[RMDB]
RNA sequence: GGGAACGACUCGAGUAGAGUCGAAAAAUCCUAUUACCAGCCAUUGCACGAAAUUAAUAUGAUGCCACGUCCUCAUACUAGAUGAAACAACCACAUCAUAUCACGGGUGAAUCCAUUCAUCGAUAGUACUAAUAAUCAGCUUCGGCUGAUUAUUAGUAAAAGAAACAACAACAACAAC
Reactivity to DMS in 0.01 (KOAc 150mM, MgCl2 10mM, bicine 150mM(pH8.5), 24C), signal-to-noise 2, nucleotides 027 to 126: a100u000c000c000u010a100u000u010a090c060c030a090g000c010c010a060u000u000g000c020a030c060g000a060a060a060u010u000a070a110u010a080u000g010a080u000g000c000c020a060c090g000u010c060c040u000c020a060u000a040c140u000a080g000a020u010g010a050a050a040c110a040a110c060c080a090c050a010u010c030a040u000a060u000c080a060c140g000g010g000u000g040a070a080u010c030c070a050u010u000c020a050u000c050g000a080u000a080g020u000
Reactivity to 2A3 in 0.01 (KOAc 150mM, MgCl2 10mM, bicine 150mM(pH8.5), 24C), signal-to-noise 3, nucleotides 027 to 126: a000u010c030c000u040a100u060u160a110c000c000a010g020c020c000a070u050u060g040c030a020c090g030a070a070a040u190u080a070a080u140a030u150g080a030u040g030c000c000a020c070g040u050c000c030u020c000a030u040a110c030u080a080g060a160u050g020a030a060a010c000a010a030c050c040a030c010a050u060c030a020u040a020u170c050a050c050g070g020g040u000g020a020a020u030c030c020a070u050u060c020a040u040c040g050a010u060a080g060u020